Source: RMDB library RFM100, as collected in RNAgym. An RNA of 177 nucleotides, treated with DMS and read out base by base. Reactivities are given for positions 27 through 126. DMS adducts were read by reverse transcription with MarathonRT. The reactions ran in a buffer of 150 mM KOAc, 10 mM MgCl2 and 150 mM bicine (pH 8.5), at 24 C.
RNA sequence: GGGAACGACUCGAGUAGAGUCGAAAAGCAGCCCCUUGGGGUUUGUUGUCCAUAUAGUUUAAGAUGGAAACAUUGAAUCAAGACAUAUUUACUCUUGUUAGGUGAAAGUUGGUGGUUGCCAUGCCAGUACGUCACGCUGAUUCGUCAGCGUGACGUAAAAAGAAACAACAACAACAAC
Reactivity to DMS in 0.01 (KOAc 150mM, MgCl2 10mM, bicine 150mM(pH8.5), 24C), signal-to-noise 1, nucleotides 027 to 126: g090c040a140g070c000c000c000c000u040u100g010g010g050g000u000u000u010g040u000u000g040u000c060c000a040u000a040u000a210g020u040u010u000a120a220g000a010u010g000g000a190a170a020c040a030u000u010g000a100a100u100c000a040a010g000a060c060a040u000a180u000u000u000a110c100u000c020u000u030g000u040u000a140g000g040u000g020a080a050a070g000u000u000g020g010u000g080g040u000u000g000c040c050a060u070g090c120c040a120g000